RNA sequence: GGGAACGACUCGAGUAGAGUCGAAAAUUAUGACAGCCUCCUCUGGGAGGCAUCUUGAAGGUCACUAAGCUCUUGUUAAUGCCUUGACCAGGAAUCCCUAUCUGUGGAUUUACUAUAAGAGGGAUAUAUAUCCAUAAAGAAGGUACAACAAUUAACAACGUCAUCAUAAUUUCGAUUAUGAUGACGUAAAAGAAACAACAACAACAAC
Reactivity to DMS in 0.01 (KOAc 150mM, MgCl2 10mM, bicine 150mM(pH8.5), 24C), signal-to-noise 3, nucleotides 027 to 156: u000u000a070u020g000a090c020a140g000c010c000u000c000c020u010c300u010g080g020g010a000g030g030c010a000u000c010u000u000g010a090a090g000g030u000c040a080c140u000a080a140g010c030u000c050u010u010g020u000u010a050a090u000g030c010c040u010u000g010a150c070c020a150g030g020a140a110u000c000c000c000u000a140u000c090u000g060u000g020g010a120u000u010u000a080c110u010a100u010a080a130g020a090g020g000g020a130u000a070u000a070u000a120u000c000c010a050u010a030a040a100g000a090a060g030g010u000a050c070a080a080c050a040a130u010u000a060a120c050a090
Reactivity to 2A3 in 0.01 (KOAc 150mM, MgCl2 10mM, bicine 150mM(pH8.5), 24C), signal-to-noise 5, nucleotides 027 to 156: u160u070a120u140g040a010c020a020g010c000c000u000c010c010u110c150u170g110g020g000a000g000g010c010a010u020c000u010u100g090a090a010g040g000u020c020a020c100u080a060a030g040c030u030c020u090u060g010u050u030a070a030u080g020c000c010u010u040g030a040c010c010a010g000g050a010a040u020c010c000c000u040a110u090c050u050g030u050g030g020a040u060u180u130a140c040u050a030u050a160a050g040a060g030g000g020a000u000a000u010a010u010a020u010c010c000a030u100a070a100a020g100a020a020g050g010u080a020c050a070a000c030a080a100u180u290a050a030c040a020